[RMDB]
RNA sequence: GGGAACGACUCGAGUAGAGUCGAAAAGAUAUGGACGUUCGAAGAGAGCUUGGAUUUAUAGGCGAAAGUAUGUCGGAAACGACAUAUGAGUAGCCUAUUGUCAGCUCUACUUCGAACGUCCUAAGUCGAUUUCUAUAUCCUUCGGGAUAUAGAAAUCAAAAGAAACAACAACAACAAC
Reactivity to 2A3 in 0.01 (KOAc 150mM, MgCl2 10mM, bicine 150mM(pH8.5), 24C), signal-to-noise 2, nucleotides 027 to 126: g040a060u160a090u250g010g000a000c010g010u010u000c000g010a020a020g000a000g010a010g010c110u230u250g200g010a070u300u300u140a040u040a010g000g000c020g000a010a000a000g030u020a010u000g000u010c010g030g060a090a060a000c000g000a000c000a010u010a000u000g010a000g000u000a000g000c000c000u000a000u000u000g010u010c000a000g020c000u020c000u000a020c000u000u000c010g000a000a010c000g010u010c000c000u000a010a000g010u000c020
Reactivity to DMS in 0.01 (KOAc 150mM, MgCl2 10mM, bicine 150mM(pH8.5), 24C), signal-to-noise 3, nucleotides 027 to 126: g010a080u010a300u000g010g010a030c000g020u010u000c000g010a020a010g010a080g010a020g000c010u000u010g030g020a010u010u020u000a010u000a000g000g000c000g000a160a180a300g000u000a000u000g000u020c010g010g010a140a130a260c000g000a010c000a000u000a000u010g000a120g000u000a120g020c010c000u000a000u000u000g000u000c000a040g010c000u000c000u000a040c000u000u000c000g000a000a010c000g010u000c000c000u000a010a080g010u000c110
This 177-nucleotide RNA was probed chemically with 2A3 and DMS. Source: RMDB library TTRINS, as collected in RNAgym. For DMS the reverse transcriptase was MarathonRT.